[RMDB]
RNA sequence: GGGAACGACUCGAGUAGAGUCGAAAAGCCGGAAGGAUCGAGGUGAAAGAGCCUCAGAACAGCUUGUCGGGGAUCCAGCUGGCGGUCGCCGCAUCGCUGGUGCUGAAGGCCGGGAUCUUCUCAGCCAGAUCUUCGAUCGUCUUGACGCCAGCCGCGCGUUUAAAGUGGCAUUCGUGCCACUUUAAACAAAAGAAACAACAACAACAAC
Reactivity to 2A3 in 0.01 (KOAc 150mM, MgCl2 10mM, bicine 150mM(pH8.5), 24C), signal-to-noise 3, nucleotides 027 to 156: g100c010c010g020g030a030a030g120g000a020u020c010g010a020g040g020u050g040a030a110a140g070a090g010c010c000u000c000a010g010a030a020c000a010g020c000u060u080g180u300c030g000g010g020g010a000u000c020c020a050g000c020u030g000g010c050g000g000u040c070g060c180c000g000c000a020u060c100g010c020u030g000g090u160g040c010u050g050a150a060g000g000c000c010g020g000g030a050u070c000u260u080c110u120c070a060g060c020c010a020g000a010u000c000u050u000c010g020a030u020c010g040u020c030u050u110g060a040c040g000c000c000a000g020c010c020g080c020g000c010
Reactivity to DMS in 0.01 (KOAc 150mM, MgCl2 10mM, bicine 150mM(pH8.5), 24C), signal-to-noise 2, nucleotides 027 to 156: g060c020c040g040g010a130a100g000g020a050u020c020g010a030g000g020u000g000a100a150a170g010a120g000c020c030u000c010a100g000a070a120c050a020g030c010u000u000g030u010c040g050g000g010g040a020u000c010c020a080g050c040u020g010g040c040g010g010u010c000g010c050c010g020c020a010u000c150g040c020u000g000g000u010g030c030u000g000a120a110g030g040c000c040g010g040g000a060u010c110u000u000c050u000c090a120g040c020c020a160g000a150u000c030u000u010c010g020a060u010c060g030u010c020u020u020g000a050c030g000c010c010a050g010c000c010g010c120g010c070
This 207-nucleotide RNA was probed chemically with 2A3 and DMS. The reactions ran in a buffer of 150 mM KOAc, 10 mM MgCl2 and 150 mM bicine (pH 8.5), at 24 C. The DMS profile rests on 3,132 reads.